Chemical mapping of a 177-nucleotide RNA with 2A3 and DMS. Reactivities are given for positions 27 through 126. The RNA was probed in 150 mM KOAc, 10 mM MgCl2 and 150 mM bicine (pH 8.5) at 24 C. High DMS reactivity at an A or C suggests that its Watson-Crick edge is free.
[RMDB]
RNA sequence: GGGAACGACUCGAGUAGAGUCGAAAAAUGCCCUGACGCUGCUUCAUUACGGAGCUGUGUCCGGGGCCCCGGUGGAUUUCGAUCCGCCGGAGGGGUGGCCCUCCACCUCGACUCCAGUCCCUCGAGGUCGAAGAGGAUCUUUCGAGAUCCUCUUCGAAAAAGAAACAACAACAACAAC
Reactivity to 2A3 in 0.01 (KOAc 150mM, MgCl2 10mM, bicine 150mM(pH8.5), 24C), signal-to-noise 5, nucleotides 027 to 126: a000u140g070c000c000c000u000g000a000c000g000c020u030g010c000u030u000c020a240u150u300a070c220g000g000a000g000c010u010g010u000g000u000c030c090g000g000g010g020c000c010c000c010g000g000u010g000g010a020u010u070u130c180g080a020u010c010c000g000c000c000g020g000a050g010g030g000g000u010g000g020c040c030c010u070c020c010a010c000c000u000c000g000a010c010u010c030c040a100g080u090c040c010c000u010c020g010a020g020g070
Reactivity to DMS in 0.01 (KOAc 150mM, MgCl2 10mM, bicine 150mM(pH8.5), 24C), signal-to-noise 2, nucleotides 027 to 126: a030u050g010c010c010c000u000g000a040c000g000c000u000g020c000u000u020c020a290u070u020a140c300g000g020a000g020c000u010g000u000g010u000c030c030g010g010g000g010c000c110c000c000g000g010u000g000g000a010u000u000u030c110g000a050u000c000c000g030c000c000g000g000a020g000g010g040g060u010g000g000c110c070c300u030c020c030a040c010c000u000c000g020a080c030u030c020c140a210g000u000c140c090c020u010c030g000a050g020g010
It was measured as part of the RMDB library RFM100.